Structure probing data (2A3 and DMS) for a 177-nucleotide construct. DMS adducts were read by reverse transcription with MarathonRT. For 2A3, 1,274 sequencing reads were counted.
RNA sequence: GGGAACGACUCGAGUAGAGUCGAAAAGCGACGGGCGACUUUGUGUACAUGUCCCCGUUUUACGGCUACCGGGAGGGGUCGCACACCGAGCACACCAGCUACGCCGCCGACCGCUUCAAGCAGGUCGUCCGGGUGUACAAUUCGUUGUACACCCGGAAAAAGAAACAACAACAACAAC
Reactivity to 2A3 in 0.01 (KOAc 150mM, MgCl2 10mM, bicine 150mM(pH8.5), 24C), signal-to-noise 1, nucleotides 027 to 126: g140c090g010a010c000g040g010g040c170g020a020c080u110u180u140g090u070g070u140a090c060a100u110g020u020c000c010c010c030g000u030u030u000u080a000c000g020g000c040u050a130c020c100g010g040g020a030g020g000g030g000u000c000g060c020a020c030a010c030c000g000a020g010c030a020c000a030c040c000a000g020c020u070a140c060g030c030c030g040c020c030g000a000c010c020g140c070u090u100c040a030a050g000c050a080g020g040u000c000g000
Reactivity to DMS in 0.01 (KOAc 150mM, MgCl2 10mM, bicine 150mM(pH8.5), 24C), signal-to-noise 2, nucleotides 027 to 126: g010c160g010a050c010g000g030g000c110g000a030c010u010u010u000g010u000g020u010a120c100a080u000g020u000c010c020c010c020g020u020u000u000u000a070c090g010g010c040u000a110c030c060g000g010g000a090g000g000g030g020u000c030g020c050a070c090a120c190c030g010a040g020c040a060c090a080c120c030a080g010c030u010a080c070g000c100c090g000c160c040g020a020c010c010g000c000u000u020c080a090a120g000c010a110g040g000u000c030g000

Reactivities are given for positions 27 through 126.